An RNA of 207 nucleotides, treated with 2A3 and DMS and read out base by base. DMS adducts were read by reverse transcription with MarathonRT. For DMS, 3,252 sequencing reads were counted. High DMS reactivity at an A or C suggests that its Watson-Crick edge is free. For 2A3 the reverse transcriptase was SuperScript II with manganese. It was measured as part of the RMDB library M2RFPK.
RNA sequence: GGGAACGACUCGAGUAGAGUCGAAAACCUACUCAAUACGUCCUCGUCGUACAGAACGGUAACAUGUUUUCCGAACAUCCGCGCUUGGGUAUACGAGUAUACACCUUACCCUACCCUCGCCAACGGGAGUGCAUCCACGAGUUCGCUCGUGGAUGAAAUCAAUAUGAGCGUUCGCGCUCAUAUUGAUAAAAGAAACAACAACAACAAC
Reactivity to 2A3 in 0.01 (KOAc 150mM, MgCl2 10mM, bicine 150mM(pH8.5), 24C), signal-to-noise 5, nucleotides 027 to 156: c000c000u020a030c050u080c070a090a090u090a110c020g050u040c030c000u040c030g090u020c010g030u090a070c060a070g080a170a030c040g030g020u080a050a030c060a170u140g030u060u040u040u040c010c010g030a060a020c020a090u050c010c020g040c020g000c050u030u020g010g000g070u030a070u050a100c050g030a040g130u030a040u020a060c110a140c010c030u090u100a060c010c000c000u010a030c000c000c000u030c030g020c040c020a060a020c020g030g020g010a040g040u080g040c010a000u000c010c000a000c000g000a010g000u060u040c160g050c090u000c000g010u010g000g010a000u000g000a000a000
Reactivity to DMS in 0.01 (KOAc 150mM, MgCl2 10mM, bicine 150mM(pH8.5), 24C), signal-to-noise 2, nucleotides 027 to 156: c010c010u000a060c060u000c030a110a170u000a070c050g040u010c000c000u000c000g000u000c070g050u000a210c070a100g010a070a120c030g000g000u010a090a110c070a090u000g020u000u000u000u000c030c020g000a110a150c070a070u000c010c000g000c000g000c040u010u000g020g020g010u000a030u010a090c090g010a100g000u010a050u010a060c110a100c130c080u000u000a020c000c010c000u000a030c010c000c000u000c150g020c040c030a060a030c010g010g010g020a150g020u010g020c000a020u000c000c010a000c030g010a020g040u000u000c300g040c000u000c000g010u010g020g030a000u000g000a010a060